Source: RMDB library OK2TRN, as collected in RNAgym. An RNA of 177 nucleotides, treated with DMS and read out base by base. The RNA was probed in 150 mM KOAc, 10 mM MgCl2 and 150 mM bicine (pH 8.5) at 24 C.

[RMDB]
RNA sequence: GGGAACGACUCGAGUAGAGUCGAAAAUCUAAUGUGCAAACUUGAGAACCACCAAAGAUUGUAUUAAACAUGAUCCCAUCAUGCAUAAAAGAAAAAACUGGCUGGGUACUAUGGUUCACACCUGUAAUAACCUGUACUUCUUCGGAAGUACAGGUUAAAAAGAAACAACAACAACAAC
Reactivity to DMS in 0.01 (KOAc 150mM, MgCl2 10mM, bicine 150mM(pH8.5), 24C), signal-to-noise 1, nucleotides 027 to 126: u000c040u010a070a070u000g040u010g010c110a060a040a110c030u010u000g000a160g000a040a140c090c060a050c050c010a080a130a070g000a170u000u000g000u000a060u000u000a110a130a110c010a010u000g000a030u000c050c040c040a190u000c030a010u010g000c030a060u000a000a070a060a150g030a000a150a050a100a060a050c100u000g000g000c130u000g020g020g040u030a010c040u000a030u000g000g030u000u000c090a140c110a050c030c040u000g000u000a030a130
For DMS, 515 sequencing reads were counted.